[RMDB]
RNA sequence: GGGAACGACUCGAGUAGAGUCGAAAAGACACUCUUAGCAGAUGACCUCCUCGUUGGUGCGUGUCGGUAAUGUUGUCAGUCACAGGCAACAGUUAACGAUCUGCAUAAAUAAAAAGAGAAGAACAAAAUUAGUAGUAGGAUUCGUCCUACUACUAAUAAAAGAAACAACAACAACAAC
Reactivity to DMS in 0.01 (KOAc 150mM, MgCl2 10mM, bicine 150mM(pH8.5), 24C), signal-to-noise 8, nucleotides 027 to 126: g010a080c090a040c010u000c020u000u020a090g020c040a020g010a030u010g000a080c020c010u000c050c000u000c110g010u040u020g010g030u010g000c140g000u000g010u000c020g000g000u020a070a080u000g000u000u000g020u000c000a080g020u030c260a110c280a110g000g000c000a010a010c010a020g010u010u020a020a020c020g010a010u000c040u000g010c000a080u040a060a050a090u060a080a070a070a070a070g000a050g020a090a100g000a060a100c130a040a050a070
Reactivity to 2A3 in 0.01 (KOAc 150mM, MgCl2 10mM, bicine 150mM(pH8.5), 24C), signal-to-noise 9, nucleotides 027 to 126: g020a000c020a000c030u040c010u060u110a020g010c020a000g020a090u020g020a050c000c000u050c020c000u080c060g130u090u140g080g020u070g000c050g010u040g020u030c020g000g020u090a080a050u020g000u000u000g000u000c020a050g120u140c070a050c060a120g010g000c010a010a000c010a020g030u010u070a030a020c020g010a020u000c010u010g000c000a000u110a010a090a010u100a010a050a000a030a000g110a010g040a120a020g070a060a030c060a100a120a070
The record gives the reactivity of an RNA of 177 nucleotides to DMS and 2A3. Conditions: 150 mM KOAc, 10 mM MgCl2 and 150 mM bicine (pH 8.5), 24 C. For 2A3, 18,813 sequencing reads were counted. Reactivities are given for positions 27 through 126. High 2A3 reactivity points to a flexible backbone, as in loops and unpaired stretches. Source: RMDB library OK1LIB, as collected in RNAgym. Values are in units of 0.01, from 0 to 300, in steps of 10.